Description:
Chemical mapping of a 177-nucleotide RNA with 2A3.

RNA sequence: GGGAACGACUCGAGUAGAGUCGAAAAGACUGCGUGCACUAGAGACGAUAUCGAGCCGGAAAUUAAUCGAUAAUGUCUCUCGUAGUGGAUACGAUCCGGCAAGUAUCGACUACUUGUGCUCGUAGGACGUCCUAGCCGCUUUCGAGCGGCUAGGACGAAAAGAAACAACAACAACAAC
Reactivity to 2A3 in 0.01 (KOAc 150mM, MgCl2 10mM, bicine 150mM(pH8.5), 24C), signal-to-noise 1, nucleotides 027 to 126: g020a020c000u000g000c010g000u000g020c000a000c000u000a000g000a000g000a000c070g000a000u060a000u050c000g020a020g000c000c000g040g060a140a030a060u300u220a070a160u140c000g000a010u020a070a060u240g050u070c000u000c000u010c070g000u050a030g130u040g020g030a000u010a080c000g030a030u030c010c000g000g050c030a010a010g000u000a000u000c030g020a000c020u140a060c020u070u030g000u000g000c000u000c000g010u030a000g000g020a000